[RMDB]
RNA sequence: GGGAACGACUCGAGUAGAGUCGAAAAGAAAAGAAGGGGGAAAGAAAGAUAUGGAAACAAAGAUUAAGGAAAGCUGAAAAGAAAGCAGAAAACAUAUCGAAGAAAGACUUAAUCGAACCCCGAAGAACCGAUUUCAUUAGUUCGCUAAUGAAAUCGGAAAAGAAACAACAACAACAAC
Reactivity to 2A3 in 0.01 (KOAc 150mM, MgCl2 10mM, bicine 150mM(pH8.5), 24C), signal-to-noise 1, nucleotides 027 to 126: g000a010a180a010a000g120a010a150g070g000g020g070g060a150a050a000g070a080a010a010g010a070u080a010u070g000g080a070a140a000c000a000a190a000g040a100u050u140a000a000g050g110a300a000a000g000c090u110g090a070a100a090a020g110a240a000a000g000c000a000g040a000a010a000a000c000a000u000a030u000c010g020a010a010g040a000a230a000g070a040c000u180u040a060a000u070c040g010a040a040c030c000c000c000g040a010a010g060a040a000
Reactivity to DMS in 0.01 (KOAc 150mM, MgCl2 10mM, bicine 150mM(pH8.5), 24C), signal-to-noise 3, nucleotides 027 to 126: g020a200a090a100a130g020a190a130g000g000g010g000g000a090a040a090g010a120a130a050g000a020u000a020u000g000g000a130a080a050c160a080a160a170g020a010u000u000a010a030g000g010a080a090a120g000c000u000g000a010a070a050a130g000a060a070a000g000c010a060g000a040a080a030a150c020a000u000a010u000c000g030a040a070g000a070a090a070g000a090c010u000u010a010a020u020c010g000a230a200c010c010c000c030g030a040a070g010a120a100

The record gives the reactivity of an RNA of 177 nucleotides to 2A3 and DMS. The DMS profile rests on 3,646 reads. For 2A3, 887 sequencing reads were counted. 2A3 adducts were read by reverse transcription with SuperScript II with manganese.